Structure probing data (DMS and 2A3) for a 170-nucleotide construct. The DMS profile rests on 3,008 reads. DMS (dimethyl sulfate) methylates the pairing face of unpaired adenines and cytosines. It was measured as part of the RMDB library 15KLIB.
RNA sequence: GGGAACGACUCGAGUAGAGUCGAAAAAACGCCUAGCAUCUGAGGGACAAAGCCGCCCCCGGGCGCUCCCCUCGGAGGUCCACUGGGUGGGUUCACAUCCCCAACCCGCGGGCCGGCUGUUCUUCUUCAAGUCCGUCCUUCGGGACGGACAAAAGAAACAACAACAACAAC
Reactivity to DMS in 0.01 (KOAc 150mM, MgCl2 10mM, bicine 150mM(pH8.5), 24C), signal-to-noise 3, nucleotides 027 to 129: a060a000c040g000c010c020u010a110g040c190a080u020c000u000g000a030g000g000g040a000c030a030a050a140g000c060c020g030c100c020c010c150c270g070g120g000c030g110c050u020c000c000c000c000u020c070g000g000a100g000g060u000c040c000a040c040u060g030g040g070u050g040g000g040u060u110c150a120c260a160u040c240c000c000c030a160a010c100c000c000g040c000g010g000g030c090c040g010g010c070u000g000u050u030c000u050u010c080u010u090c030a030a050
Reactivity to 2A3 in 0.01 (KOAc 150mM, MgCl2 10mM, bicine 150mM(pH8.5), 24C), signal-to-noise 1, nucleotides 027 to 129: a000a000c020g030c020c040u030a020g100c030a090u000c000u000g000a000g030g000g020a000c060a030a030a000g030c080c100g000c020c020c000c030c050g060g010g000c010g000c000u030c000c020c000c010u000c000g040g000a010g000g000u010c000c000a000c110u090g000g000g000u000g000g010g020u190u290c210a050c020a160u250c010c000c000c000a040a180c000c000c000g000c040g000g000g000c010c020g000g030c010u070g000u000u000c030u090u040c000u080u080c050a130a020